[RMDB]
RNA sequence: GGGAACGACUCGAGUAGAGUCGAAAAUGAAGCAAAUCCAUAAUUGCCAAUGAUGAGCACUUCGCUAUUGCCGCCUAAAAACGGUUAGCCGGGGCUGCUAGAGCCUUGUUACCAAAGAUAGCCGGCGUUACGGCAUGAUGGUUCGCCAUCAUGCCAACAUUCGCUUCGUAUUCGUACGAAGCGAAUGAAAAGAAACAACAACAACAAC
Reactivity to 2A3 in 0.01 (KOAc 150mM, MgCl2 10mM, bicine 150mM(pH8.5), 24C), signal-to-noise 4, nucleotides 027 to 156: u110g000a050a000g050c070a020a030a100u050c030c020a090u150a160a100u180u110g040c040c030a080a070u090g060a040u110g030a030g020c040a020c080u050u060c050g000c030u050a070u090u210g010c000c000g010c000c020u060a040a030a010a000a000c000g000g040u050u020a030g000c040c010g030g000g000g000c060u030g020c020u090a070g030a020g100c000c010u030u050g030u030u050a050c040c020a080a030a000g080a050u050a030g060c030c020g020g000c010g120u130u140a050c090g010g000c000a000u010g010a000u000g010g040u060u080c210g010c050c000a000u010c000a000u000g020c000c000a000a000
Reactivity to DMS in 0.01 (KOAc 150mM, MgCl2 10mM, bicine 150mM(pH8.5), 24C), signal-to-noise 1, nucleotides 027 to 156: u020g020a090a040g010c050a090a100a090u000c020c070a100u000a080a190u010u000g040c040c060a100a190u010g000a170u010g010a100g010c060a060c040u010u000c020g030c000u000a060u010u000g000c000c000g000c010c040u030a070a140a080a050a040c070g000g020u000u000a030g020c040c040g090g010g050g040c050u020g030c110u000a110g000a080g000c000c010u000u000g030u000u000a180c090c070a070a100a100g000a090u000a040g020c000c100g000g030c070g030u010u010a100c050g040g040c010a000u010g010a090u000g000g010u000u010c300g000c040c000a010u010c000a010u000g000c000c000a000a020